[RMDB]
RNA sequence: GGGAACGACUCGAGUAGAGUCGAAAACCUACUCAAUACGUCCUCGUCGUACAGAACGGUAACAUGUUUUCCGAACAUCCGCGCUUGGGUAUACGAGUAUACACCUUACACAACCCUCGCCAACGGGAGUGCAUCCACGAGUUCGCUCGUGGAUGAAAGGACGGAAAUGGUUCGCCAUUUCCGUCCUAAAAGAAACAACAACAACAAC
Reactivity to 2A3 in 0.01 (KOAc 150mM, MgCl2 10mM, bicine 150mM(pH8.5), 24C), signal-to-noise 1, nucleotides 027 to 156: c000c010u050a010c030u030c000a030a130u020a060c040g010u020c040c080u020c000g030u080c000g000u060a100c100a030g060a160a000c000g090g000u050a020a000c000a070u050g100u120u000u020u040c000c000g030a050a030c020a090u010c000c150g010c010g000c230u010u010g090g000g000u050a050u020a040c080g020a000g090u000a000u100a030c050a300c010c070u090u170a050c030a000c000a090a300c050c030c000u100c020g070c100c000a020a020c030g000g010g010a020g120u120g000c000a000u050c000c000a000c020g020a020g030u200u030c120g020c060u000c000g000u000g000g000a000u000g000a000a000

The record gives the reactivity of an RNA of 207 nucleotides to 2A3. It was measured as part of the RMDB library M2RFPK. For 2A3 the reverse transcriptase was SuperScript II with manganese. The RNA was probed in 150 mM KOAc, 10 mM MgCl2 and 150 mM bicine (pH 8.5) at 24 C.